[RMDB]
RNA sequence: GGGAACGACUCGAGUAGAGUCGAAAACAGGACCCUGCCCGAGGGGCCCUCGCGCCAACCUGGACCGGUCCCCGCCUCCUCCGCUGCCCAAUCUCUCAGACCCACCCCACCUGCAGGCCCAGACCACCAAUGUGGAAGUGUUCGCACUUCCACAUUGAAAAGAAACAACAACAACAAC
Reactivity to DMS in 0.01 (KOAc 150mM, MgCl2 10mM, bicine 150mM(pH8.5), 24C), signal-to-noise 2, nucleotides 027 to 126: c140a100g020g030a070c010c010c050u000g000c030c010c040g000a100g000g030g010g000c040c040c020u000c090g020c050g000c110c040a070a080c060c030u010g000g020a050c030c090g010g020u000c020c010c010c030g000c030c020u000c010c010u000c030c050g020c020u000g000c030c020c040a060a070u000c040u000c060u010c040a080g000a120c040c020c010a190c030c030c010c020a040c070c040u000g010c040a060g000g000c050c020c040a070g010a120c020c040a050c160
Source information: This 177-nucleotide RNA was probed chemically with DMS. The reactions ran in a buffer of 150 mM KOAc, 10 mM MgCl2 and 150 mM bicine (pH 8.5), at 24 C.